The record gives the reactivity of an RNA of 177 nucleotides to DMS and 2A3. The reactions ran in a buffer of 150 mM KOAc, 10 mM MgCl2 and 150 mM bicine (pH 8.5), at 24 C. High 2A3 reactivity points to a flexible backbone, as in loops and unpaired stretches.
[RMDB]
RNA sequence: GGGAACGACUCGAGUAGAGUCGAAAAGCGAGUCGUUGAGCAAUCACUUGAGAACUCUGAUGAGGUAUUGUAGCAUCGGGUUACGGUAGCCGAGUCAGUUGAUUCUCAUCAUGUGGCACUUCGACGGGACAUAAGUCUCAUUCGUGAGACUUAUGUCAAAAGAAACAACAACAACAAC
Reactivity to DMS in 0.01 (KOAc 150mM, MgCl2 10mM, bicine 150mM(pH8.5), 24C), signal-to-noise 6, nucleotides 027 to 126: g010c070g010a080g020u010c000g020u000u000g000a100g020c060a150a090u020c060a060c050u010u000g000a010g010a020a020c020u000c010u000g000a010u000g000a300g000g000u000a010u000u000g000u000a010g010c010a300u030c230g010g000g010u010u000a010c000g020g010u000a020g030c000c000g010a300g000u000c000a010g020u030u000g000a170u000u000c010u000c000a020u020c150a070u030g000u000g000g000c090a090c060u000u000c000g010a030c060g020g000
Reactivity to 2A3 in 0.01 (KOAc 150mM, MgCl2 10mM, bicine 150mM(pH8.5), 24C), signal-to-noise 9, nucleotides 027 to 126: g110c070g030a020g010u000c000g000u000u020g020a020g020c030a040a130u220c010a040c050u040u040g000a000g000a010a000c000u000c000u010g010a000u020g010a010g010g010u020a010u010u030g010u010a010g020c020a070u240c200g200g220g000u010u000a000c000g030g030u030a040g300c000c000g010a010g010u000c000a010g020u060u040g050a160u010u000c000u000c000a010u020c010a040u130g010u020g040g000c030a010c070u020u020c000g010a010c000g020g040